Chemical mapping of a 177-nucleotide RNA with 2A3. Conditions: 150 mM KOAc, 10 mM MgCl2 and 150 mM bicine (pH 8.5), 24 C. 2A3 adducts were read by reverse transcription with SuperScript II with manganese. The 2A3 profile rests on 471 reads. High 2A3 reactivity points to a flexible backbone, as in loops and unpaired stretches.
RNA sequence: GGGAACGACUCGAGUAGAGUCGAAAACGGGCGGGACGGGGUUAGGAGAUGCAUGGUCGCGGGCGGUAUCGACCUCUGGUCCGCUGUGUUCGCCCUCGCCGGGUGGCCGCGUCGGUGCGGACCCCGACAGCCCAAGCACGUUCGCGUGCUUGGGCUGAAAAGAAACAACAACAACAAC
Reactivity to 2A3 in 0.01 (KOAc 150mM, MgCl2 10mM, bicine 150mM(pH8.5), 24C), signal-to-noise 1, nucleotides 027 to 126: c060g020g210g000c180g080g000g050a120c070g000g030g000g000u300u270a060g100g150a050g000a000u120g000c060a090u040g060g060u080c060g020c100g020g000g000c010g010g050u160a050u120c010g000a000c000c080u060c080u050g000g000u000c010c020g000c080u000g010u000g000u060u000c000g000c020c000c000u000c050g090c110c030g000g000g010u060g240g050c000c000g000c000g000u140c060g010g010u140g050c030g050g000a010c000c000c000c000g000a000